[RMDB]
Description: The record gives the reactivity of an RNA of 207 nucleotides to 2A3 and DMS. The reactions ran in a buffer of 150 mM KOAc, 10 mM MgCl2 and 150 mM bicine (pH 8.5), at 24 C. 2A3 is a SHAPE reagent: it acylates the 2'-hydroxyl of flexible nucleotides of all four kinds. The data come from the RNA Mapping Database (RMDB), library OK3TST.
RNA sequence: GGGAACGACUCGAGUAGAGUCGAAAACUCGCUCAAACAUACAGAGUUGUUGUGCGAUAUGAAUCUCUCUGCAUUAGAAUGGUCGAAGAAUCAGCGGCAAUUCGAGACCUAAUUAGAAGCCGCAUUAACAGCUUUGGAACACGCCUUGCUGACGUGAAUUUUACGAUUAGUUCGCUAAUCGUAAAAUAAAAGAAACAACAACAACAAC
Reactivity to 2A3 in 0.01 (KOAc 150mM, MgCl2 10mM, bicine 150mM(pH8.5), 24C), signal-to-noise 6, nucleotides 027 to 156: c020u010c010g030c010u070c050a120a110a080c040a040u240a080c030a040g070a010g080u050u000g010u000u000g020u030g000c010g000a030u040a100u220g170a140a120u060c050u020c010u000c030u130g050c050a100u070u080a090g150a210a100u160g010g000u020c000g010a140a020g010a000a050u020c010a050g030c010g020g000c010a010a010u010u010c010g020a020g000a030c000c010u060a080a060u060u070a040g060a120a010g040c040c000g010c010a010u030u090a030a020c010a000g010c010u080u170u170g080g010a050a030c040a010c040g020c010c020u030u060g010c020u020g020a030c020g000u020g040a050
Reactivity to DMS in 0.01 (KOAc 150mM, MgCl2 10mM, bicine 150mM(pH8.5), 24C), signal-to-noise 5, nucleotides 027 to 156: c020u000c030g020c050u010c060a110a080a110c100a130u000a160c050a080g000a110g010u000u000g040u000u000g020u000g010c050g010a110u000a080u010g010a110a100u010c040u000c030u000c030u000g030c060a110u000u000a090g010a120a110u000g010g030u000c020g000a170a220g000a080a070u000c040a140g020c030g020g020c060a080a090u000u000c020g010a300g000a030c020c000u000a030a090u000u000a170g010a090a140g000c040c010g010c020a080u010u010a040a070c030a040g000c010u000u000u000g030g010a100a140c030a030c010g020c010c020u000u000g010c140u000g000a050c040g000u010g010a110